RNA sequence: GGGAACGACUCGAGUAGAGUCGAAAACCUGGUUUAGGGUUCCAGGCUAGCCCUAUCUAUCGGUCGAGAUGCGAGCGCUUAAGCUUAAAUUGAGUGGCUGAGUUAGUGGUGAACGUAUCCCUAUGUUAAAACGGUAGCUGCUUCGGCAGCUACCGAACCUUACAUUAUUCUUCGGAAUAAUGUAAGGAAAAGAAACAACAACAACAAC
Reactivity to 2A3 in 0.01 (KOAc 150mM, MgCl2 10mM, bicine 150mM(pH8.5), 24C), signal-to-noise 3, nucleotides 027 to 156: c010c000u020g000g030u060u090u070a040g030g000g020u040u050c020c020a010g030g000c040u030a030g000c000c000c010u010a010u020c030u030a140u050c010g000g000u010c010g030a020g010a140u020g030c080g040a030g020c030g060c170u300u300a120a050g010c010u020u010a040a090a020u020u020g010a030g070u200g030g000c020u010g020a010g010u010u010a050g010u100g170g000u040g010a000a030c040g040u090a100u130c010c000c000u030a060u070g070u020u120a070a060a010a020c010g000g000u000a000g000c000u000g010c010u020u040c090g090g000c020a010g000c000u000a000c010c000g000a000a000
Reactivity to DMS in 0.01 (KOAc 150mM, MgCl2 10mM, bicine 150mM(pH8.5), 24C), signal-to-noise 1, nucleotides 027 to 156: c000c020u000g010g000u010u000u000a040g030g010g000u020u000c030c010a120g010g030c020u000a300g030c010c010c010u000a060u020c030u010a070u030c010g070g020u000c020g010a300g010a040u000g020c300g030a070g000c060g010c190u040u000a140a140g020c010u000u000a040a210a050u010u000g000a270g050u000g000g040c020u000g000a100g000u000u000a030g020u000g040g000u000g020a050a080c110g030u000a060u000c010c000c010u000a040u020g010u000u010a030a060a140a150c020g020g030u000a020g000c000u000g010c040u000u000c260g080g040c000a020g020c000u010a010c020c010g000a020a020